RNA sequence: GGGAACGACUCGAGUAGAGUCGAAAAGGCCGCGCGUACCGGCUCGAGUGGUACGCGUUUGGCCGGUGAAGGCUCUGGUUUGGCCCGCGAAAGGCGCGUGUUAGGCGGGCCAAUGCGCGCGGAAAAACCAUCAGCGUACGUUCGCGUGCGCUGGUGGAAAAGAAACAACAACAACAAC
Reactivity to DMS in 0.01 (KOAc 150mM, MgCl2 10mM, bicine 150mM(pH8.5), 24C), signal-to-noise 7, nucleotides 027 to 126: g010g010c000c000g000c000g010c000g010u000a000c000c010g010g010c070u030c120g000a100g020u020g000g000u000a010c010g010c000g000u000u030u030g020g010c000c000g000g010u020g010a120a130g000g000c000u000c030u010g010g000u000u000u010g000g000c000c000c000g020c030g010a070a110a140g000g000c010g010c040g000u010g010u010u010a120g010g010c000g000g000g010c000c020a010a010u010g010c050g000c050g000c030g010g010a070a070a070a120a120
Reactivity to 2A3 in 0.01 (KOAc 150mM, MgCl2 10mM, bicine 150mM(pH8.5), 24C), signal-to-noise 6, nucleotides 027 to 126: g010g000c000c000g000c000g000c010g000u010a000c000c010g090g070c080u060c060g040a040g060u130g020g010u010a010c010g000c000g000u010u030u050g000g000c000c000g000g010u070g050a080a020g020g000c000u000c010u020g080g000u020u040u040g020g000c000c010c000g000c020g050a150a080a040g100g010c030g000c030g030u090g060u090u120a110g080g000c000g000g000g010c000c000a000a000u010g000c010g000c000g000c000g030g030a060a070a000a010a010

Chemical mapping of a 177-nucleotide RNA with DMS and 2A3. Conditions: 150 mM KOAc, 10 mM MgCl2 and 150 mM bicine (pH 8.5), 24 C. The data come from the RNA Mapping Database (RMDB), library OK1LIB. For 2A3 the reverse transcriptase was SuperScript II with manganese. DMS adducts were read by reverse transcription with MarathonRT. Values are in units of 0.01, from 0 to 300, in steps of 10.